[RMDB]
RNA sequence: GGGAACGACUCGAGUAGAGUCGAAAAGAUAUGGAUUAGUUGGCCGAUAAGACCGUGUCGGAAACGACACGGGUCUUUUGACGGCUUACUAAUCCUAAGUCAAAAGCGUCAACUUCGGUUGACGCAAGCAUUAUUUACUGUUCGCAGUAAAUAAUGCAAAAGAAACAACAACAACAAC
Reactivity to DMS in 0.01 (KOAc 150mM, MgCl2 10mM, bicine 150mM(pH8.5), 24C), signal-to-noise 6, nucleotides 027 to 126: g000a010u000a050u020g000g010a010u000u000a000g010u000u000g010g020c010c000g010a110u020a010a010g010a080c010c000g010u000g010u000c000g030g000a010a010a040c000g010a010c000a000c000g010g010g010u010c000u000u000u000u000g010a200c120g020g000c000u000u000a000c000u000a000a000u000c000c000u000a000a050g000u000c000a140a120a150a170g010c000g010u000c000a000a000c000u000u020c230g030g000u000u000g000a000c000g010c010a010a030
Reactivity to 2A3 in 0.01 (KOAc 150mM, MgCl2 10mM, bicine 150mM(pH8.5), 24C), signal-to-noise 5, nucleotides 027 to 126: g010a000u010a000u050g000g010a000u000u010a010g010u010u030g030g000c020c060g130a270u160a300a000g000a000c000c000g000u000g000u000c000g000g000a030a000a010c010g010a000c000a010c000g010g020g000u040c000u000u050u030u080g290a200c030g000g000c000u000u010a000c000u000a000a000u000c000c000u000a000a000g010u000c010a020a040a120a130g010c000g010u000c000a000a010c010u070u150c300g150g000u000u000g000a010c000g000c000a000a010
The record gives the reactivity of an RNA of 177 nucleotides to DMS and 2A3. The 2A3 profile rests on 30,795 reads. It was measured as part of the RMDB library TTRDES. The DMS profile rests on 16,760 reads. The reactions ran in a buffer of 150 mM KOAc, 10 mM MgCl2 and 150 mM bicine (pH 8.5), at 24 C.